RNA sequence: GGGAACGACUCGAGUAGAGUCGAAAAACAUUUUGUAAGUGAAUGUGCGAGCGCCGAAAGGUGCAUCAUUCUGAAUCGGAAUCAGGUUUUUAGCUUUGAACUGCGGGUAAGGGCGCUCAAUUACGCGGUUGGUCAUUACCUGCAACUGUUUAGCAAAAAGCCUAAAUAUUUUCGAAUAUUUAGGCUUAAAAGAAACAACAACAACAAC
Reactivity to DMS in 0.01 (KOAc 150mM, MgCl2 10mM, bicine 150mM(pH8.5), 24C), signal-to-noise 1, nucleotides 027 to 156: a060c060a110u000u000u000u000g010u000a090a180g020u000g000a040a030u000g040u000g020c120g020a130g030c000g000c000c000g020a110a130a220g060g050u000g000c010a090u010c000a040u010u000c010u000g010a070a170u010c100g000g000a070a090u000c030a160g010g000u010u000u000u000u010a140g020c030u000u000u000g010a070a060c040u000g000c010g000g010g020u010a020a030g020g080g020c070g030c010u020c010a040a110u000u000a060c080g040c050g000g020u010u010g050g010u000c030a090u000u010a030c000c010u000g020c010a010a030c040u010g000u000u000u000a040g030c020a030a100a100
Reactivity to 2A3 in 0.01 (KOAc 150mM, MgCl2 10mM, bicine 150mM(pH8.5), 24C), signal-to-noise 2, nucleotides 027 to 156: a000c060a020u150u110u110u150g060u090a120a120g080u040g050a010a010u040g020u030g060c070g120a140g050c000g000c000c000g050a060a040a000g010g010u030g000c000a000u030c000a020u020u000c010u030g150a130a150u070c070g030g120a050a020u050c000a070g000g110u020u030u060u090u120a010g000c010u030u070u130g040a010a000c020u000g010c010g010g010g000u010a010a000g000g000g000c090g020c020u050c060a030a130u080u100a020c150g000c050g220g020u090u110g110g000u010c000a030u010u010a000c000c000u000g000c000a000a000c040u040g010u020u040u060a000g020c000a000a040a160